Source: RMDB library OK2TRN, as collected in RNAgym. An RNA of 177 nucleotides, treated with 2A3 and DMS and read out base by base. The RNA was probed in 150 mM KOAc, 10 mM MgCl2 and 150 mM bicine (pH 8.5) at 24 C. For DMS, 2,934 sequencing reads were counted. 2A3 adducts were read by reverse transcription with SuperScript II with manganese. For DMS the reverse transcriptase was MarathonRT.
RNA sequence: GGGAACGACUCGAGUAGAGUCGAAAAGUGCACGCUGAGCCGGUCGCGCAGGUCUUCAAGCUCUUCCAUUAGGCUCUCGUAGCGCUCAGCUGAGAUGAGGAUGGCUGCGGGUCGGCCAUGAUUCAUCGCGUGAACACAAAUUCGUUUGUGUUCACGCAAAAGAAACAACAACAACAAC
Reactivity to 2A3 in 0.01 (KOAc 150mM, MgCl2 10mM, bicine 150mM(pH8.5), 24C), signal-to-noise 2, nucleotides 027 to 126: g060u050g030c100a020c120g060c080u060g030a010g050c000c020g010g040u060c030g020c010g000c230a000g010g070u000c030u010u010c030a100a120g000c010u000c000u080u020c030c010a150u100u200a040g000g070c000u000c010u060c100g080u180a020g020c100g000c060u030c030a010g000c040u030g030a030g000a060u020g000a010g020g010a020u050g160g090c000u000g000c010g060g020g020u080c000g000g020c000c000a000u050g010a080u080u060c060a100u090c080
Reactivity to DMS in 0.01 (KOAc 150mM, MgCl2 10mM, bicine 150mM(pH8.5), 24C), signal-to-noise 2, nucleotides 027 to 126: g010u000g010c090a050c090g020c110u000g020a090g010c010c030g000g000u010c020g020c030g020c020a050g010g000u000c020u000u010c050a050a140g000c020u000c040u010u000c030c080a130u010u000a110g010g000c000u000c020u010c160g030u000a030g010c020g000c100u000c230a160g000c060u000g010a070g000a100u000g000a010g000g010a030u000g020g000c010u000g010c000g020g000g000u010c020g000g010c030c010a000u000g000a140u000u010c070a050u000c110